RNA sequence: GGGAACGACUCGAGUAGAGUCGAAAAUCCAAACUAUUGGGAGAUUGAUGAGAUCGACCGACACCAAAUCAAGAUCAAUGAAGAUUACGAUUCCGUUUCGGUCAUCUCAUCAAUCUCCCAAUACGAACACAAAUACUUGGUUCGCCAAGUAUUUGUGAAAAGAAACAACAACAACAAC
Reactivity to DMS in 0.01 (KOAc 150mM, MgCl2 10mM, bicine 150mM(pH8.5), 24C), signal-to-noise 4, nucleotides 027 to 126: u000c000c010a090a100a170c150u000a010u000u000g010g010g000a010g010a020u000u000g010a000u000g010a000g000a020u000c120g030a000c000c010g010a010c040a030c000c080a080a010a020u000c000a080a300g000a000u000c020a130a120u020g000a250a140g000a020u000u010a070c300g000a000u000u000c140c300g010u000u000u000c000g030g000u000c000a010u000c000u000c000a000u000c010a000a000u000c000u000c000c000c000a000a000u000a000c150g000a130a190